[RMDB]
RNA sequence: GGGAACGACUCGAGUAGAGUCGAAAAUGGCACGACCCGAUCACCAACACCGACCGGCGUGCCCGUGCGAAGAAUGCCGGCGCGAUCCGCGCGGCCGGCGGCGUGAUCACUACGACGAAGGAGUAUCAAUACCCAAACUUUUCGAAGUUUGGGUAUUAAAAGAAACAACAACAACAAC
Reactivity to 2A3 in 0.01 (KOAc 150mM, MgCl2 10mM, bicine 150mM(pH8.5), 24C), signal-to-noise 2, nucleotides 027 to 126: u060g010g000c000a000c030g110a160c040c000c050g010a040u040c000a030c070c060a150a150c000a050c080c040g080a030c010c000g010g040c010g010u010g000c000c010c020g060u130g010c030g040a100a050g130a200a060u160g000c040c000g010g000c030g000c010g030a030u000c040c010g080c020g010c040g180g020c010c020g000g010c030g000g000c020g030u070g010a010u050c020a010c100u110a010c030g110a000c030g050a070a020g070g070a060g010u070a050u140c040
Reactivity to DMS in 0.01 (KOAc 150mM, MgCl2 10mM, bicine 150mM(pH8.5), 24C), signal-to-noise 8, nucleotides 027 to 126: u010g010g010c020a030c020g000a150c160c030c030g010a040u010c020a040c070c060a130a120c260a120c300c060g000a030c020c020g010g000c020g020u000g000c020c010c100g010u010g020c040g010a120a080g010a110a110u010g000c010c000g000g010c030g010c010g010a110u010c090c080g010c030g010c010g020g020c010c010g010g010c010g010g010c090g010u000g000a070u000c060a100c080u010a070c050g000a070c070g010a090a070g010g000a090g010u010a060u010c110

Background: Conditions: 150 mM KOAc, 10 mM MgCl2 and 150 mM bicine (pH 8.5), 24 C. The record gives the reactivity of an RNA of 177 nucleotides to 2A3 and DMS. Reactivities are given for positions 27 through 126. For DMS, 10,828 sequencing reads were counted. 2A3 adducts were read by reverse transcription with SuperScript II with manganese. Source: RMDB library OK2TRN, as collected in RNAgym.